Structure probing data (2A3 and DMS) for a 177-nucleotide construct. The reactions ran in a buffer of 150 mM KOAc, 10 mM MgCl2 and 150 mM bicine (pH 8.5), at 24 C.

[RMDB]
RNA sequence: GGGAACGACUCGAGUAGAGUCGAAAAGUGACACUGUUCGCAGUGUCACAAAGUGGAGGAUCUAGAACCACAAUAACUAGAUCAAAGAUCUAGUCUAGAUCAAAAGCAUACAGUUCGCUGUAUGCAACAGGAAUAGUAACUUCGGUUACUAUUCCUGAAAAGAAACAACAACAACAAC
Reactivity to 2A3 in 0.01 (KOAc 150mM, MgCl2 10mM, bicine 150mM(pH8.5), 24C), signal-to-noise 7, nucleotides 027 to 126: g010u000g000a000c000a000c010u020g020u060u070c170g010c110a000g000u010g000u000c000a000c000a000a020a000g080u080g040g090a100g070g000a010u000c000u010a010g030a080a090c030c020a050c050a080a060u170a040a030c010u000a000g000a010u010c030a120a300a050g020a010u000c000u000a000g060u000c010u020a010g000a010u010c030a000a070a030a050g000c000a000u000a000c000a010g020u030u090c170g050c090u000g000u000a010u000g000c000a000a020
Reactivity to DMS in 0.01 (KOAc 150mM, MgCl2 10mM, bicine 150mM(pH8.5), 24C), signal-to-noise 8, nucleotides 027 to 126: g000u010g000a010c000a010c000u000g010u000u010c200g040c000a010g010u000g010u000c000a000c000a030a040a080g020u000g000g000a210g010g000a010u000c000u000a010g010a090a300c050c030a060c100a080a110u010a050a100c010u000a000g010a010u000c020a140a130a130g010a030u000c000u000a010g000u000c010u000a010g000a010u000c050a090a090a110a130g010c000a000u000a000c000a010g010u010u000c220g010c010u000g010u000a000u000g000c000a060a080